Structure probing data (2A3) for a 207-nucleotide construct. Reactivities are given for positions 27 through 156.
RNA sequence: GGGAACGACUCGAGUAGAGUCGAAAAUUCAGGCAAAGAGAAUGGCACUAGCAGAGAUAUGACUUUUACCUGUUACCAGGUGGCUACACCUGGGGUUUAUAGAGCAGAGAAAUAGUUCUGUUUGUCUGGAGUUUGUGACGUGACUGGAAAGGGUGAGGACGGAAUUAACGUUCGCGUUAAUUCCGUCAAAAGAAACAACAACAACAAC
Reactivity to 2A3 in 0.01 (KOAc 150mM, MgCl2 10mM, bicine 150mM(pH8.5), 24C), signal-to-noise 2, nucleotides 027 to 156: u070u010c030a000g000g020c010a030a020a020g070a020g020a030a020u100g050g020c060a040c100u020a030g030c040a060g010a030g050a140u030a080u270g050a090c030u040u070u070u120a070c000c010u000g000u040u040a050c000c000a000g000g000u020g000g030c140u300a050c020a000c010c010u000g000g000g000g000u010u200u030a200u180a060g050a000g030c030a020g040a050g030a050a100a040u100a030g050u040u000c000u060g250u030u000u060g030u030c000u010g020g010a040g010u050u140u150g060u030g000a010c060g020u070g010a030c000u010g020g050a030a030a070g040g030g000u080g080a040g040